[RMDB]
RNA sequence: GGGAACGACUCGAGUAGAGUCGAAAAACGUUGAUAUGGAUUUACUCCGAGGAGACGAACUACCACGAACAGGGGCAACUCUACCCGUGGCGUCUCCGUUUGACGAGUAAGUCCAAAGUCAACAUGCGCGGUCAUUGGUUCGCCAAUGACAAAAGAAACAACAACAACAAC
Reactivity to 2A3 in 0.01 (KOAc 150mM, MgCl2 10mM, bicine 150mM(pH8.5), 24C), signal-to-noise 9, nucleotides 027 to 129: a010c100g000u000u000g010a010u020a030u050g010g000a000u000u000u000a000c000u000c010c010g010a060g000g000a010g010a000c010g010a060a050c100u200a070c080c010a000c010g040a080a030c070a120g010g010g000g010c030a050a150c030u020c000u060a050c020c010c010g000u000g010g000c000g000u000c000u000c000c000g000u030u030u090g020a020c020g000a000g000u010a010a000g000u000c000c000a000a000a010g020u000c000a000a000c010a030u110g090c150g020c060g070
Reactivity to DMS in 0.01 (KOAc 150mM, MgCl2 10mM, bicine 150mM(pH8.5), 24C), signal-to-noise 6, nucleotides 027 to 129: a080c170g000u030u010g000a030u000a000u000g020g010a040u000u000u000a020c020u020c030c000g020a080g000g010a040g000a020c030g000a130a060c110u070a300c000c030a000c000g000a090a290c120a040g000g020g070g000c280a050a170c030u030c040u010a110c130c070c010g000u000g010g000c000g000u030c010u020c010c000g000u020u030u040g020a140c300g000a000g000u000a020a010g010u050c000c000a020a020a090g020u030c010a000a000c030a110u060g050c040g000c130g000